[RMDB]
RNA sequence: GGGAACGACUCGAGUAGAGUCGAAAAGCCAUCGGCCAUGCUGUCUCCGCUUGCGCGAAGGUAGUAAGUCGCGCUUGGAUGCCGUAUGCAGUGAUCAUGGAGAUCCAGAUCGGACUCGACAUAGUCAACUGGAUCGGGAGUUCGCUCCCGAUCCAGUAAAAGAAACAACAACAACAAC
Reactivity to 2A3 in 0.01 (KOAc 150mM, MgCl2 10mM, bicine 150mM(pH8.5), 24C), signal-to-noise 2, nucleotides 027 to 126: g060c000c000a110u140c010g060g000c000c010a030u020g020c000u010g000u030c030u010c000c040g040c090u030u140g040c010g000c000g030a010a000g170g050u140a030g190u130a260a020g020u000c000g010c030g000c030u050u070g040g000a010u030g000c000c010g010u000a010u040g000c050a010g010u010g050a020u030c040a060u200g090g040a020g000a140u020c000c000a030g100a100u190c000g060g000a000c020u030c000g030a000c080a080u090a030g060u040c000a010
Reactivity to DMS in 0.01 (KOAc 150mM, MgCl2 10mM, bicine 150mM(pH8.5), 24C), signal-to-noise 1, nucleotides 027 to 126: g000c000c030a130u040c000g000g010c010c050a010u000g000c000u050g030u010c050u000c010c030g000c030u000u070g010c130g020c000g000a040a110g010g040u000a130g000u030a150a170g000u000c000g020c020g040c010u000u000g020g000a030u000g010c020c090g000u000a030u010g010c030a140g030u050g050a040u020c010a000u000g000g000a070g020a050u000c000c060a150g040a070u010c130g000g000a060c050u000c100g000a030c220a010u010a030g000u050c060a100

An RNA of 177 nucleotides, treated with 2A3 and DMS and read out base by base. Source: RMDB library OK1LIB, as collected in RNAgym. As a SHAPE reagent, 2A3 marks flexible, mostly unpaired nucleotides at the ribose 2'-OH. The RNA was probed in 150 mM KOAc, 10 mM MgCl2 and 150 mM bicine (pH 8.5) at 24 C. DMS adducts were read by reverse transcription with MarathonRT. For 2A3, 958 sequencing reads were counted. For DMS, 1,599 sequencing reads were counted.